The record gives the reactivity of an RNA of 207 nucleotides to 2A3 and DMS. Reactivities are given for positions 27 through 156.
RNA sequence: GGGAACGACUCGAGUAGAGUCGAAAAGAAUUUUAAGAUAAGAAUCACAUAACUAGCAAUAAGACUGAUAAGCUGACCAAUUAUACUAAGCACAAUAGAAUUGAUCAGAGAAUAUAGCAAACAUAUUACAAUAGAACAGAUAGAACAGCUUAGUGAAGAUCAGUGAUAAUUUCGAUUAUCACUGAUCAAAAGAAACAACAACAACAAC
Reactivity to 2A3 in 0.01 (KOAc 150mM, MgCl2 10mM, bicine 150mM(pH8.5), 24C), signal-to-noise 3, nucleotides 027 to 156: g020a040a050u230u200u210u250a080a070g010a070u120a120a050g040a140a080u100c030a050c020a110u180a170a040c090u060a070g000c010a010a090u090a160a030g060a080c050u060g000a070u080a130a010g030c010u020g020a020c000c060a020a040u140u040a010u020a120c020u020a030a030g020c010a060c030a070a090u040a080g130a110a050u020u060g000a010u030c030a000g040a000g030a140a010u080a000u040a050g040c020a000a060a080c030a030u150a040u020u170a040c040a050a040u030a040g030a040a010c040a010g080a070u100a020g060a030a010c000a010g020c010u030u010a000g020u000g040a090a000
Reactivity to DMS in 0.01 (KOAc 150mM, MgCl2 10mM, bicine 150mM(pH8.5), 24C), signal-to-noise 2, nucleotides 027 to 156: g000a110a110u000u000u000u000a070a160g010a180u000a070a090g030a110a120u010c010a130c090a110u000a110a090c070u000a080g020c040a080a060u000a080a140g010a170c020u010g050a160u010a040a130g020c040u000g040a020c030c030a040a030u030u000a040u000a130c050u000a060a130g060c110a130c070a030a100u000a100g010a060a100u000u000g000a040u000c010a000g000a120g000a040a070u000a050u000a010g000c050a030a100a100c110a080u000a060u000u000a060c010a030a110u010a070g020a050a070c000a060g010a040u000a060g000a090a090c040a070g010c050u000u000a040g020u000g010a080a170